Conditions: 150 mM KOAc, 10 mM MgCl2 and 150 mM bicine (pH 8.5), 24 C. This 177-nucleotide RNA was probed chemically with DMS and 2A3. The 2A3 profile rests on 651 reads. For 2A3 the reverse transcriptase was SuperScript II with manganese. The DMS profile rests on 953 reads.
[RMDB]
RNA sequence: GGGAACGACUCGAGUAGAGUCGAAAAGAAAGAGGCUAAACCGUGUAAACUAUGAUGGCCUUACAAAGCUCGACGAAAAGAAACACUUGAUACUACCGAAAGCCAGAGCUGCUGCGUACGGAAGAAAACGUGAUUACUGCUUCGGCAGUAAUCACGUAAAAGAAACAACAACAACAAC
Reactivity to DMS in 0.01 (KOAc 150mM, MgCl2 10mM, bicine 150mM(pH8.5), 24C), signal-to-noise 1, nucleotides 027 to 126: g000a020a070a130g000a100g030g010c060u000a050a120a130c220c050g000u010g000u010a140a050a160c160u060a200u020g000a170u020g000g000c000c000u020u020a030c170a070a080a130g000c140u080c000g020a070c140g100a100a050a030a000g040a060a080a000c030a170c050u000u000g000a020u000a110c100u000a040c090c000g000a030a080a080g000c140c150a170g000a100g000c000u000g000c000u000g000c030g000u000a030c100g000g000a220a090g000a060a080a000
Reactivity to 2A3 in 0.01 (KOAc 150mM, MgCl2 10mM, bicine 150mM(pH8.5), 24C), signal-to-noise 1, nucleotides 027 to 126: g140a060a010a020g030a000g000g000c010u080a160a030a000c040c060g030u040g000u120a060a080a000c000u000a020u160g050a080u060g080g000c020c000u000u000a030c100a050a010a010g010c020u030c010g130a110c040g000a000a000a000a160g160a000a030a000c020a000c000u040u000g020a000u040a040c030u010a020c010c010g070a170a000a000g060c000c000a000g000a000g000c000u020g050c020u000g000c020g000u040a020c040g000g000a040a000g000a000a180a000